[RMDB]
This 177-nucleotide RNA was probed chemically with 2A3 and DMS.
For DMS the reverse transcriptase was MarathonRT.
It was measured as part of the RMDB library OK1LIB.
The reactions ran in a buffer of 150 mM KOAc, 10 mM MgCl2 and 150 mM bicine (pH 8.5), at 24 C.
For 2A3, 3,277 sequencing reads were counted.
RNA sequence: GGGAACGACUCGAGUAGAGUCGAAAAAUGUGGGCGUAUGGAAAGAGUAUGUUGAAUAAGGAAGCCUAUAUCAAGGAUAUAAUGAAAUAUUCAAAGGUUAUUGAUGUAGGAGUAGUCGAUUGCGACCAGCACAUCUAACUUUCGAGUUAGAUGUGCUAAAAGAAACAACAACAACAAC
Reactivity to 2A3 in 0.01 (KOAc 150mM, MgCl2 10mM, bicine 150mM(pH8.5), 24C), signal-to-noise 7, nucleotides 027 to 126: a000u150g010u040g010g010g020c030g040u090a080u100g070g050a040a110a050g080a040g010u060a120u110g030u040u030g040a100a120u140a130a050g120g050a090a030g030c000c000u010a020u010a010u000c010a020a040g030g030a010u030a010u030a090a170u200g140a070a150a020u100a060u050u030c040a090a060a080g220g000u140u100a060u030u050g010a020u010g000u000a000g000g030a070g060u080a010g000u050c020g070a130u070u300g070c030g000a020c020c020
Reactivity to DMS in 0.01 (KOAc 150mM, MgCl2 10mM, bicine 150mM(pH8.5), 24C), signal-to-noise 6, nucleotides 027 to 126: a060u020g020u010g000g010g010c030g000u010a060u020g000g000a040a050a050g010a050g020u000a050u030g010u000u010g010a060a070u010a100a130g000g000a100a110g010c000c010u000a010u000a010u000c020a030a070g000g000a030u000a050u030a060a160u020g000a050a090a080u020a050u020u010c030a060a080a160g000g020u010u030a110u010u000g000a010u000g010u000a010g000g010a080g010u010a070g010u000c020g020a140u020u030g010c070g020a040c070c200